The data come from the RNA Mapping Database (RMDB), library TTRINS. The record gives the reactivity of an RNA of 177 nucleotides to DMS. Reactivities are rounded to 0.1 and cut off at 0 and 3.

RNA sequence: GGGAACGACUCGAGUAGAGUCGAAAAGAUAUGGAACAGGGGUACUACCCACCGAUGUCUUUGGAACCGCUAAUCGGAAACGAUUAGAACUACGGUUCGACAUCGAGGUACCCCUGUUCCUAAGUCAGAGCAUAACAAACUUCGGUUUGUUAUGCUCAAAAGAAACAACAACAACAAC
Reactivity to DMS in 0.01 (KOAc 150mM, MgCl2 10mM, bicine 150mM(pH8.5), 24C), signal-to-noise 1, nucleotides 027 to 126: g020a060u000a300u000g000g040a060a000c010a000g020g000g000g020u010a000c000u020a080c090c150c070a300c190c010g000a000u010g020u030c000u020u030u020g030g020a000a010c000c000g010c000u000a000a000u000c000g040g000a100a050a160c010g020a000u000u010a000g000a080a070c170u010a300c020g050g010u000u000c000g000a020c000a010u000c000g020a080g000g010u000a020c000c000c000c000u000g000u000u000c000c000u000a000a020g010u030c060a200